[RMDB]
RNA sequence: GGGAACGACUCGAGUAGAGUCGAAAACACUAGCUUUAGAAGCUGUAACUGGCUUUAGGAGCUGUAACCCUUACAGCAAUGUAAGGGUGAUACCUAGCAGAGUCAGUGAUACCUAGCAGAGCUAGAAGAUAAUGUAGACUUUCGAGUUUACAUUAUCAAAAGAAACAACAACAACAAC
Reactivity to 2A3 in 0.01 (KOAc 150mM, MgCl2 10mM, bicine 150mM(pH8.5), 24C), signal-to-noise 4, nucleotides 027 to 126: c020a000c000u000a000g000c000u040u080u060a070g020a160a020g020c030u030g010u020a100a050c000u000g020g000c010u120u090u110a160g040g050a100g010c090u030g120u160a210a250c000c000c000u000u000a010c010a040g040c000a290a300u000g000u000a000a000g000g000g000u000g010a000u000a010c010c030u030a020g010c050a000g010a000g010u000c000a000g000u010g020a020u030a030c010c030u010a000g010c010a000g010a000g000c000u000a000g000a020a000
Reactivity to DMS in 0.01 (KOAc 150mM, MgCl2 10mM, bicine 150mM(pH8.5), 24C), signal-to-noise 2, nucleotides 027 to 126: c050a250c010u000a000g000c000u010u010u010a100g020a090a060g010c090u000g020u010a170a040c000u010g000g020c000u010u010u010a100g020g020a270g030c300u070g010u030a300a040c000c000c000u000u000a010c000a000g000c300a300a300u000g000u000a010a000g010g000g030u000g000a050u090a080c100c040u020a070g000c280a060g000a020g020u010c000a000g010u000g000a090u040a050c210c070u010a040g030c090a070g000a020g000c000u000a000g010a080a090
Structure probing data (2A3 and DMS) for a 177-nucleotide construct.
For DMS, 5,961 sequencing reads were counted.
It was measured as part of the RMDB library OK1LIB.
For 2A3 the reverse transcriptase was SuperScript II with manganese.